[RMDB]
RNA sequence: GGGAACGACUCGAGUAGAGUCGAAAAGAGCUCUUCCGCUUUCUUUCUUCCAUUGACCCACUGCUCGAGGACGUCCUCCCUGUCUCCUCGGUUCUUCUUCGAUCCGGACCGGCUCAUCUCGGCAAGGGUGAUAUGUAGAGUUCGCUCUACAUAUCACAAAAGAAACAACAACAACAAC
Reactivity to 2A3 in 0.01 (KOAc 150mM, MgCl2 10mM, bicine 150mM(pH8.5), 24C), signal-to-noise 4, nucleotides 027 to 126: g020a010g010c010u030c020u280u060c080c020g020c050u060u090u030c030u010u080u010c000u070u050c040c040a150u030u250g040a060c020c000c010a070c050u010g010c000u010c000g000a020g020g070a180c010g020u020c000c000u050c010c000c000u010g040u010c020u010c000c010u020c030g030g020u040u030c020u070u000c010u040u050c030g060a070u000c020c030g010g020a050c020c010g010g040c010u020c030a100u010c040u010c040g020g020c060a060a060g130g040
Reactivity to DMS in 0.01 (KOAc 150mM, MgCl2 10mM, bicine 150mM(pH8.5), 24C), signal-to-noise 3, nucleotides 027 to 126: g000a080g000c030u010c120u000u010c130c090g000c030u000u000u000c050u010u000u000c050u010u000c080c090a190u010u000g010a090c020c030c080a120c040u000g000c010u000c030g010a030g000g000a120c090g020u000c040c040u000c020c010c010u000g000u010c040u000c010c030u000c040g000g010u000u000c020u010u000c050u000u010c060g010a090u000c050c040g010g000a150c050c020g010g000c060u000c050a090u010c040u000c030g000g000c120a070a120g010g010